[RMDB]
Source: RMDB library OK2TRN, as collected in RNAgym. An RNA of 177 nucleotides, treated with 2A3 and DMS and read out base by base. The 2A3 profile rests on 1,848 reads.

RNA sequence: GGGAACGACUCGAGUAGAGUCGAAAAUGUCCAUGAUGCCGGUCGGGAAAUCUCUGGAAAUCCGUCUGGAUCUGGCGAAGCCCAGUCGGGAGAUCAGCGGCUUCACCUUCGAAUUGAUCUGACCCCGCACGUCUUAGUCAUUCGUGACUAAGACGUGAAAAGAAACAACAACAACAAC
Reactivity to 2A3 in 0.01 (KOAc 150mM, MgCl2 10mM, bicine 150mM(pH8.5), 24C), signal-to-noise 2, nucleotides 027 to 126: u080g040u020c020c000a020u180g060a000u170g300c000c000g000g030u040c010g000g040g090a070a080a070u050c110u030c120u280g230g050a020a030a010u030c040c020g000u010c000u020g000g000a000u000c010u000g010g010c020g010a040a030g030c000c010c020a010g120u070c020g000g000g030a070g020a180u020c020a000g020c010g070g000c000u100u090c050a080c010c040u090u120c060g120a180a130u070u110g030a020u020c000u020g060a080c020c000c000c010g000
Reactivity to DMS in 0.01 (KOAc 150mM, MgCl2 10mM, bicine 150mM(pH8.5), 24C), signal-to-noise 2, nucleotides 027 to 126: u020g000u010c010c010a020u000g040a040u000g020c010c020g000g000u000c030g030g000g010a080a070a140u000c010u000c200u030g000g000a030a100a160u000c020c010g020u000c010u000g010g000a050u000c000u010g020g000c010g000a110a100g010c050c000c100a110g020u000c020g000g000g030a080g000a040u010c020a030g000c070g010g000c150u000u000c200a090c140c110u010u000c060g000a110a110u000u000g010a080u000c010u020g000a210c060c000c000c050g010